[RMDB]
RNA sequence: GGGAACGACUCGAGUAGAGUCGAAAAGAUCCGUGUAGGAUUGGGAACCCGCCGAAUUGAAACAUCUUAGUAGGCGGAGGAAAAGAAAGCAAUAUGCGAUGUCGUUAGUAACGGCGAGCGAAAUCGAUCAAAAUGGGGGAUUCGUCCCCCAUUUUGAAAAAGAAACAACAACAACAAC
Reactivity to 2A3 in 0.01 (KOAc 150mM, MgCl2 10mM, bicine 150mM(pH8.5), 24C), signal-to-noise 2, nucleotides 027 to 126: g030a000u040c020c000g020u000g190u300a050g010g040a060u000u070g040g000g020a020a000c010c000c020g000c000c000g030a010a020u060u060g010a100a160a190c080a140u120c020u050u050a010g030u000a000g000g000c020g020g000a090g000g010a030a120a000a000g070a110a040a080g000c110a080a070u000a040u280g060c000g060a030u220g000u000c000g030u030u030a040g080u140a050a060c010g000g000c010g000a000g000c020g000a090a080a000u100c120g030a060
Reactivity to DMS in 0.01 (KOAc 150mM, MgCl2 10mM, bicine 150mM(pH8.5), 24C), signal-to-noise 3, nucleotides 027 to 126: g000a020u000c010c020g000u070g010u070a140g000g010a050u010u010g010g010g020a220a140c060c000c000g000c020c000g010a140a230u010u010g000a090a120a110c300a070u010c020u000u000a080g020u000a040g000g000c000g000g000a060g000g000a060a040a100a140g000a160a040a110g030c110a030a100u030a110u030g000c010g020a130u070g020u020c000g010u000u040a080g000u050a180a100c050g000g000c010g030a160g000c050g000a080a110a090u020c100g010a130